[RMDB]
RNA sequence: GGGAACGACUCGAGUAGAGUCGAAAAGGGGUCGAUCACGUUUGACGGACAUGAAGCCUCGGAUAGCGAUACUGAAGCCUCCACGGUAUCGUGCGGAGUGCUUCAACAGCCCGAGUGAUCGACGGAGGCACCCAAAAGCGAAGAUUCGUCUUCGCAAGGAUUGGAUUUAGUUCGCUAAAUCCAAUCCAAAAGAAACAACAACAACAAC
Reactivity to 2A3 in 0.01 (KOAc 150mM, MgCl2 10mM, bicine 150mM(pH8.5), 24C), signal-to-noise 3, nucleotides 027 to 156: g060g010g040g000u000c010g000a010u000c000a010c030g050u050u290u300g220a130c070g000g010a030c060a120u150g000a000a000g000c010c020u040c070g040g090a170u210a020g000c000g000a000u000a000c000u040g050a130a030g010c000c000u000c000c000a030c010g000g000u000a000u010c010g000u050g040c100g080g030a070g010u240g010c000u000u000c010a040a020c070a010g060c000c000c020g010a020g000u000g000a000u000c010g000a000c010g010g000a000g000g000c000a050c000c000c000a020a150a040a000g000c000g000a010a010g010a000u060u140c220g050u000c100u000u010c000g000c030a010a040
Reactivity to DMS in 0.01 (KOAc 150mM, MgCl2 10mM, bicine 150mM(pH8.5), 24C), signal-to-noise 1, nucleotides 027 to 156: g000g020g030g010u000c020g030a070u000c020a020c010g000u040u000u010g000a120c180g080g010a030c010a300u000g000a070a020g020c010c000u020c000g020g030a250u010a160g110c030g000a040u000a020c040u020g000a050a080g000c020c020u020c000c030a300c030g000g000u010a040u010c000g020u010g020c190g000g010a070g020u020g000c000u010u000c020a040a070c160a040g030c010c000c020g020a180g010u020g000a030u000c000g010a000c010g020g020a090g100g050c000a100c000c020c010a060a070a220a190g040c000g000a010a030g010a180u000u020c300g020u000c010u000u000c000g050c020a060a110